An RNA of 177 nucleotides, treated with 2A3 and DMS and read out base by base. For DMS the reverse transcriptase was MarathonRT. The DMS profile rests on 808 reads.
RNA sequence: GGGAACGACUCGAGUAGAGUCGAAAAGUCAUCGCGAAUCUUCGGCACCCCACACGACGUCGAUGUGGGCGCAUUGUGCCGCGCCUACCACGUGGAAUCUCGCCAGAUCGAGGUCGACGAACUCGGAGACGUAAUCGACGUUCGCGUCGAUUACGUCAAAAGAAACAACAACAACAAC
Reactivity to 2A3 in 0.01 (KOAc 150mM, MgCl2 10mM, bicine 150mM(pH8.5), 24C), signal-to-noise 2, nucleotides 027 to 126: g070u000c010a050u060c080g000c040g110a150a290u030c040u100u110c130g010g000c000a030c040c000c020c000a030c000a000c050g180a020c070g090u060c020g040a120u110g000u050g000g050g020c010g000c010a060u020u210g120u120g190c050c040g000c020g000c010c000u000a030c000c040a080c050g030u010g000g080a050a050u050c030u050c110g020c000c000a040g010a050u070c010g010a000g040g050u070c080g030a030c010g010a100a040c030u040c030g000g040a080
Reactivity to DMS in 0.01 (KOAc 150mM, MgCl2 10mM, bicine 150mM(pH8.5), 24C), signal-to-noise 2, nucleotides 027 to 126: g000u000c030a060u000c000g010c050g010a090a150u000c040u000u000c080g070g020c070a180c080c000c000c000a160c090a120c070g070a070c120g030u010c120g020a040u000g070u040g000g000g000c080g010c040a070u020u000g040u010g040c130c080g030c010g030c000c040u000a040c000c160a090c100g060u000g030g010a070a010u020c150u000c140g070c020c070a040g000a010u010c020g000a010g010g000u010c040g000a020c030g000a110a100c070u000c040g020g000a240